[RMDB]
RNA sequence: GGGAACGACUCGAGUAGAGUCGAAAAUCGCAGGCAACCCAGACCUCUUUGGGGGAGUGGACCUGUCCACUCGGGGAAGGGCCUUAGCAUUUUUGGGCUUUUUAACCUUUAUUCUGCGUAAUUGGCCUCCUGAUUCUGUAGUGCCCUCCGAAGCAAGGCUACAUAUGUUGUUCGCAACAUAUGUAGCAAAAGAAACAACAACAACAAC
Reactivity to 2A3 in 0.01 (KOAc 150mM, MgCl2 10mM, bicine 150mM(pH8.5), 24C), signal-to-noise 4, nucleotides 027 to 156: u090c010g000c010a010g020g000c030a120a020c020c000c000a030g070a210c040c050u090c080u090u150u140g020g000g000g000g010a010g000u080g000g030a150c030c090u050g040u010c010c000a000c010u000c020g020g000g010g080a050a050g030g000g000c010c000u020u050a020g020c040a130u040u050u020u050u080g010g010g000c010u100u100u020u040u140a090a140c000c000u060u100u080a110u170u060c030u040g010c020g030u020a040a080u050u060g010g010c000c000u060c020c010u040g020a080u160u020c000u070g130u070a060g020u050g100c000c020c000u010c000c010g040a030a010g040c090a060a010g090
Reactivity to DMS in 0.01 (KOAc 150mM, MgCl2 10mM, bicine 150mM(pH8.5), 24C), signal-to-noise 2, nucleotides 027 to 156: u010c040g000c020a040g000g030c070a070a090c020c000c010a190g000a120c100c020u000c090u000u010u000g010g000g000g030g010a070g040u000g030g020a050c040c070u010g030u000c030c030a030c020u010c030g000g010g000g010a090a140g000g030g030c000c030u010u010a090g030c070a120u010u000u010u000u010g020g000g000c010u000u050u000u010u000a020a110c020c040u000u010u000a120u050u000c100u010g010c030g030u010a060a100u000u000g010g030c000c010u000c020c020u000g000a090u000u010c050u000g020u000a090g020u010g010c010c010c020u010c020c030g020a040a120g000c060a100a090g000
An RNA of 207 nucleotides, treated with 2A3 and DMS and read out base by base. Values are in units of 0.01, from 0 to 300, in steps of 10. The DMS profile rests on 4,033 reads. Reactivities are given for positions 27 through 156. The reactions ran in a buffer of 150 mM KOAc, 10 mM MgCl2 and 150 mM bicine (pH 8.5), at 24 C.